Overview
Chemical mapping of a 177-nucleotide RNA with 2A3 and DMS. For 2A3, 2,167 sequencing reads were counted. The RNA was probed in 150 mM KOAc, 10 mM MgCl2 and 150 mM bicine (pH 8.5) at 24 C. DMS adducts were read by reverse transcription with MarathonRT.

[RMDB]
RNA sequence: GGGAACGACUCGAGUAGAGUCGAAAAGGCGAGGACGUGGGCGGACCGGCGGGAUGGGCUCCAGUCACCGGCUCGGUGGGCGACCGUCCCUUCCCAUGAGUCCACACGGUAAGCGCCUCUGGCCCGACCUUGUAAUGACGUUCGCGUCAUUACAAGGAAAAGAAACAACAACAACAAC
Reactivity to 2A3 in 0.01 (KOAc 150mM, MgCl2 10mM, bicine 150mM(pH8.5), 24C), signal-to-noise 2, nucleotides 027 to 126: g020g000c020g000a080g090g060a070c010g020u030g000g020g240c120g000g010a020c020c000g080g070c110g040g010g000a020u010g000g030g000c070u000c030c030a030g050u040c010a010c010c020g300g000c120u130c150g030g020u050g040g000g040c030g000a040c010c020g110u130c000c020c020u070u080c020c010c020a030u120g050a030g010u000c010c000a000c020a000c010g020g030u130a090a050g020c010g010c000c000u030c040u050g090g000c000c000c000g030a100
Reactivity to DMS in 0.01 (KOAc 150mM, MgCl2 10mM, bicine 150mM(pH8.5), 24C), signal-to-noise 1, nucleotides 027 to 126: g000g020c040g040a030g020g010a090c030g010u020g010g000g000c160g040g000a090c020c010g010g040c300g000g010g010a040u000g000g000g000c010u000c010c060a070g010u000c000a060c020c000g000g010c080u000c160g020g010u000g010g000g010c070g010a040c020c030g000u000c000c000c010u090u000c000c000c000a100u010g000a150g000u000c000c000a100c000a040c010g000g030u020a160a230g000c020g000c000c000u000c060u030g010g000c000c000c000g000a170